[RMDB]
RNA sequence: GGGAACGACUCGAGUAGAGUCGAAAAGCCUUGAUUUUCCAAUGGUGUAUUUUCAUGACAAGGUUUCCUAUCCAACUUUUGAAGCAACUGGGGAAAUUAGGCAAGUUAUAUUGAGAGCAAGGGAUAGAAUCGGUGUGGUUUUCGAACCACACCGAUUAAAAGAAACAACAACAACAAC
Reactivity to DMS in 0.01 (KOAc 150mM, MgCl2 10mM, bicine 150mM(pH8.5), 24C), signal-to-noise 2, nucleotides 027 to 126: g000c000c010u000u040g030a020u040u010u000u000c010c050a160a130u020g000g020u010g010u020a010u020u160u000u000c060a040u020g030a140c160a050a150g010g080u000u000u020c010c040u000a010u060c040c000a030a140c070u000u000u000u030g000a030a110g000c120a040a060c020u010g000g000g000g000a070a020a010u000u080a020g000g000c060a020a120g000u030u030a070u050a080u020u000g000a060g000a020g000c120a200a030g010g000g010a070u000a030g010
Reactivity to 2A3 in 0.01 (KOAc 150mM, MgCl2 10mM, bicine 150mM(pH8.5), 24C), signal-to-noise 2, nucleotides 027 to 126: g000c010c000u030u040g050a100u120u000u010u000c040c060a130a130u070g000g210u110g100u120a210u120u170u110u040c030a010u130g080a030c010a030a010g010g000u040u110u010c010c010u000a100u000c010c000a010a090c150u060u130u120u160g090a030a040g080c050a050a050c020u000g030g030g010g030a000a030a050u030u010a030g060g030c000a020a000g060u140u020a190u030a050u080u150g030a000g000a020g070c000a050a010g090g000g000a020u070a130g230